The data come from the RNA Mapping Database (RMDB), library M2RFPK. Chemical mapping of a 207-nucleotide RNA with 2A3. For 2A3, 855 sequencing reads were counted. For 2A3 the reverse transcriptase was SuperScript II with manganese. Values cover nucleotides 27 to 156.
RNA sequence: GGGAACGACUCGAGUAGAGUCGAAAACGAGGUGCGGUAGGCCUCGUUAACAAACCGCAAAAAAAUAGUCGCAAACGACGACAACUACGCACUCGCAGCUUAAUAACCUGCGCUGAGCCCUUCUCCCAAAACUGAGGUAGGUUCGCCUACCUCAGAACUACGCACAACUGUUCGCAGUUGUGCGUAGAAAAGAAACAACAACAACAAC
Reactivity to 2A3 in 0.01 (KOAc 150mM, MgCl2 10mM, bicine 150mM(pH8.5), 24C), signal-to-noise 1, nucleotides 027 to 156: c010g000a010g060g000u110g040c020g040g000u100a060g080g000c000c000u010c010g050u000u000a010a000c030a000a040a030c010c030g080c060a010a000a120a000a000a000a080u160a020g000u000c000g010c090a030a180a180c070g140a030c000g000a020c050a040a080c010u100a020c050g020c070a030c070u040c000g000c010a000g000c000u070u040a050a010u030a060a080c000c000u010g030c000g060c150u030g050a040g010c000c000c030u070u070c050u100c020c010c010a010a090a110a170c020u000g000a000g000g000u000a000g000g020u010u050c160g050c070c000u010a020c000c000u000c000a000g000a000a000